[RMDB]
Chemical mapping of a 177-nucleotide RNA with 2A3 and DMS. Reactivities are given for positions 27 through 126. For 2A3 the reverse transcriptase was SuperScript II with manganese. For DMS, 941 sequencing reads were counted. Values are in units of 0.01, from 0 to 300, in steps of 10.
RNA sequence: GGGAACGACUCGAGUAGAGUCGAAAACUUGCAUUGGAGGUGGCCAAGGUAUUGCUGUCAUCAUUCAGAGCACAGCCUGAAGAGACCAGUGAGCUCACUGUGACCCAUCCUUACUCUACUUGGCCAGACCUGAGCGUUUAUUCGUAAACGCUCAGGUAAAAGAAACAACAACAACAAC
Reactivity to 2A3 in 0.01 (KOAc 150mM, MgCl2 10mM, bicine 150mM(pH8.5), 24C), signal-to-noise 1, nucleotides 027 to 126: c070u120u150g000c040a130u000u190g090g000a070g080g060u050g020g020c000c020a050a030g070g000u070a070u110u180g030c030u010g070u030c020a080u000c000a090u080u160c070a030g000a010g020c010a020c050a240g050c000c010u000g000a050a020g030a010g060a060c010c010a030g060u010g070a070g040c050u080c080a030c020u020g030u010g000a030c020c020c020a050u060c040c040u120u060a090c010u000c030u050a120c020u030u040g010g060c000c000a000g010
Reactivity to DMS in 0.01 (KOAc 150mM, MgCl2 10mM, bicine 150mM(pH8.5), 24C), signal-to-noise 2, nucleotides 027 to 126: c050u000u020g010c090a050u000u010g000g000a140g010g000u000g000g010c040c030a080a020g010g040u010a040u010u000g020c040u000g010u000c080a210u000c060a150u000u000c080a070g000a160g000c100a060c180a050g020c010c040u000g010a090a040g020a040g010a070c150c070a070g020u000g010a070g050c070u010c050a100c090u000g020u000g010a070c080c030c020a090u000c030c130u000u010a100c030u000c000u010a080c010u020u000g010g020c030c020a110g010